[RMDB]
RNA sequence: GGGAACGACUCGAGUAGAGUCGAAAAUGAGCUUUUCUCUUCGUUGGUAAUUAGGUUGCUUCCUGCCUUGACAGUUUUCUUUAAUCCCCGAUAUGAAGUUCACAAUUGUCAUCUCAUUGCUAUUGUCCGAUAUAAUAGACUUCGGUCUAUUAUAUCGAAAAGAAACAACAACAACAAC
Reactivity to 2A3 in 0.01 (KOAc 150mM, MgCl2 10mM, bicine 150mM(pH8.5), 24C), signal-to-noise 4, nucleotides 027 to 126: u080g000a010g020c020u080u010u050u050c000u000c000u070u040c070g080u040u070g050g030u060a120a080u070u090a090g020g040u050u080g030c020u050u010c000c000u010g020c000c000u040u040g040a030c040a060g030u040u020u050u060c030u020u160u060a100a120u080c020c010c000c000g010a010u010a020u140g070a060a010g020u040u100c050a020c010a100a060u090u070g070u070c010a040u000c050u020c040a080u060u120g020c030u090a050u170u100g050u050c040
Reactivity to DMS in 0.01 (KOAc 150mM, MgCl2 10mM, bicine 150mM(pH8.5), 24C), signal-to-noise 8, nucleotides 027 to 126: u010g010a100g010c080u000u000u000u000c030u000c020u000u000c070g010u000u000g010g010u000a050a070u010u000a070g010g010u000u000g010c050u000u000c020c020u000g000c030c030u000u000g010a080c080a080g010u000u000u000u000c030u000u010u000a120a170u000c030c010c010c070g010a110u000a070u000g010a050a080g010u000u000c090a050c100a040a070u000u000g000u000c040a060u000c090u000c070a090u000u000g010c050u000a100u000u000g010u010c120